The record gives the reactivity of an RNA of 177 nucleotides to DMS and 2A3.
[RMDB]
RNA sequence: GGGAACGACUCGAGUAGAGUCGAAAAUCCUGGCCAACGUCAACAUUGGGAGCCACAUCUGCAAUGUAGAGGGGGGGAAAAAAACGUGACUGCGCGUCGUGAGCUCGCUGAGACGUUCUGGACGGGGAUAUGUUAUAUAAUUCGUUAUAUAACAUAUAAAAGAAACAACAACAACAAC
Reactivity to DMS in 0.01 (KOAc 150mM, MgCl2 10mM, bicine 150mM(pH8.5), 24C), signal-to-noise 9, nucleotides 027 to 126: u010c000c000u000g020g020c010c020a040a040c030g010u000c010a040a200c170a290u010u010g000g000g000a020g010c010c060a030c040a100u000c060u010g030c030a090a140u000g010u000a060g010a160g010g010g000g010g000g000g010a000a000a050a070a040a050a060c090g020u010g010a080c040u000g000c300g010c040g010u000c090g010u000g010a140g010c000u000c010g000c010u000g000a130g000a020c010g010u000u000c110u010g010g010a080c030g010g000g000g010
Reactivity to 2A3 in 0.01 (KOAc 150mM, MgCl2 10mM, bicine 150mM(pH8.5), 24C), signal-to-noise 5, nucleotides 027 to 126: u010c000c000u000g030g010c000c010a030a000c010g010u020c010a010a020c010a070u120u280g050g030g000a000g000c010c010a030c000a040u030c040u120g020c020a040a120u100g030u100a060g100a160g080g030g000g000g000g030g000a090a090a020a010a000a000a030c040g040u060g050a020c030u030g000c010g000c010g020u050c010g000u020g000a030g010c000u010c070g170c060u010g000a000g000a000c000g000u040u000c030u040g010g000a010c000g010g000g000g000

The reactions ran in a buffer of 150 mM KOAc, 10 mM MgCl2 and 150 mM bicine (pH 8.5), at 24 C.